The record gives the reactivity of an RNA of 207 nucleotides to 2A3 and DMS. As a SHAPE reagent, 2A3 marks flexible, mostly unpaired nucleotides at the ribose 2'-OH. The reactions ran in a buffer of 150 mM KOAc, 10 mM MgCl2 and 150 mM bicine (pH 8.5), at 24 C. 2A3 adducts were read by reverse transcription with SuperScript II with manganese. For DMS the reverse transcriptase was MarathonRT.
[RMDB]
RNA sequence: GGGAACGACUCGAGUAGAGUCGAAAAGGGGGAUGUCUCUUGAGGGCUUCUGGGAAAGGUUUUCUCUCUCCUAGAGGAGAUAGCCCUUUAGUCUCUGGAGGCUCUUGUGUCUCUGUGUAGUGGCUGGAACAAGAUGCUGCAGCCAUCUUGAGACCAACGCAUUAGUAUUAUUCGUAAUACUAAUGCGAAAAGAAACAACAACAACAAC
Reactivity to 2A3 in 0.01 (KOAc 150mM, MgCl2 10mM, bicine 150mM(pH8.5), 24C), signal-to-noise 3, nucleotides 027 to 156: g040g010g010g010g010a020u040g030u010c010u000c000u030u050g040a040g020g020g020c000u020u000c000u010g000g010g050a000a070a040g060g030u060u050u190u040c020u010c000u000c010u040c050c060u110a080g020a090g070g000a010g000a010u060a040g040c000c000c000u060u010u020a000g010u000c030u000c020u100g030g010a000g020g020c000u000c020u110u070g070u020g010u040c000u000c010u020g070u020g060u110a080g050u010g010g010c010u030g020g050a110a030c060a100a060g100a160u220g020c070u110g030c030a000g010c010c000a020u000c020u050u050g000a010g010a000c000c010a040a040
Reactivity to DMS in 0.01 (KOAc 150mM, MgCl2 10mM, bicine 150mM(pH8.5), 24C), signal-to-noise 2, nucleotides 027 to 156: g000g030g040g050g030a150u010g000u000c010u000c000u000u010g010a050g030g010g010c040u010u000c030u000g000g020g010a040a060a060g030g030u000u000u000u000c070u010c000u010c020u010c120c050u000a110g030a130g030g000a050g010a080u010a080g020c010c010c010u000u000u000a050g010u010c040u010c030u010g020g060a100g020g010c030u000c070u000u000g020u010g020u020c000u000c010u010g020u000g000u010a110g000u010g010g000c000u000g010g010a160a110c020a080a120g000a160u000g040c020u000g010c020a040g010c000c010a010u020c030u000u010g010a100g010a140c030c010a060a210